Record summary: Structure probing data (DMS and 2A3) for a 177-nucleotide construct. For DMS, 3,108 sequencing reads were counted. It was measured as part of the RMDB library OK2TRN.
[RMDB]
RNA sequence: GGGAACGACUCGAGUAGAGUCGAAAACGAGCCAAUCGGGCAGUGGAUACACUGCUCAGCCCCCGGCCCAGCCGCCGGCGCAGUCCGGGUCGCAACAAUCGCACCAGGGCCCAUCCACGCCACCUACAUAGCACUAGGAAUUCGUUCCUAGUGCUAUAAAAGAAACAACAACAACAAC
Reactivity to DMS in 0.01 (KOAc 150mM, MgCl2 10mM, bicine 150mM(pH8.5), 24C), signal-to-noise 4, nucleotides 027 to 126: c100g010a100g020c060c070a140a090u010c120g020g000g010c000a020g020u000g000g010a260u010a160c010a020c000u000g000c010u000c010a110g000c050c020c010c040c050g000g000c040c020c020a120g000c060c080g000c050c000g020g020c080g010c080a070g000u000c020c050g000g010g000u000c090g010c050a120a060c150a070a090u010c080g000c040a050c030c030a080g010g000g010c020c040c040a070u010c050c030a100c070g000c040c020a060c040c040u000a100c140
Reactivity to 2A3 in 0.01 (KOAc 150mM, MgCl2 10mM, bicine 150mM(pH8.5), 24C), signal-to-noise 1, nucleotides 027 to 126: c030g010a040g110c020c010a040a120u140c080g010g010g010c010a010g000u000g000g030a180u170a300c010a000c030u000g000c000u000c000a010g040c010c040c000c000c030g030g010c000c010c030a030g000c010c020g040c050c060g000g000c050g000c050a020g010u070c010c000g000g050g000u030c080g000c060a060a120c010a130a210u120c070g000c060a010c000c020a020g000g040g020c000c000c010a020u000c020c010a020c040g000c000c000a050c030c000u020a040c020

As a SHAPE reagent, 2A3 marks flexible, mostly unpaired nucleotides at the ribose 2'-OH. For 2A3 the reverse transcriptase was SuperScript II with manganese. For 2A3, 1,802 sequencing reads were counted. The reactions ran in a buffer of 150 mM KOAc, 10 mM MgCl2 and 150 mM bicine (pH 8.5), at 24 C.